The record gives the reactivity of an RNA of 177 nucleotides to DMS.
[RMDB]
RNA sequence: GGGAACGACUCGAGUAGAGUCGAAAACGGGCCAAAGGGCAGGAUGCCCCCCUGGAGUUCACGUUUCACGUGGAAAUCACACCCAACGUGCAGAAGGAGCAGGCGCACUCGGAGGAGCAUUUGGGAAGUCAGAGAAAGGGUUCGCCCUUUCUCUGACAAAAGAAACAACAACAACAAC
Reactivity to DMS in 0.01 (KOAc 150mM, MgCl2 10mM, bicine 150mM(pH8.5), 24C), signal-to-noise 1, nucleotides 027 to 126: c090g020g010g000c060c020a040a090a110g010g020g030c000a100g000g010a020u000g000c000c020c010c040c000c050u000g020g000a150g060u000u000c020a020c010g000u000u020u000c210a110c130g020u000g030g000a020a100a060u010c120a050c190a160c070c010c000a040a050c100g030u030g020c100a060g030a150a060g010g000a100g020c070a050g000g000c080g010c030a050c060u000c060g020g000a100g010g020a040g000c020a030u020u000u000g000g020g020a090a050
Description:
Reactivities are given for positions 27 through 126. The RNA was probed in 150 mM KOAc, 10 mM MgCl2 and 150 mM bicine (pH 8.5) at 24 C. The data come from the RNA Mapping Database (RMDB), library OK2TRN.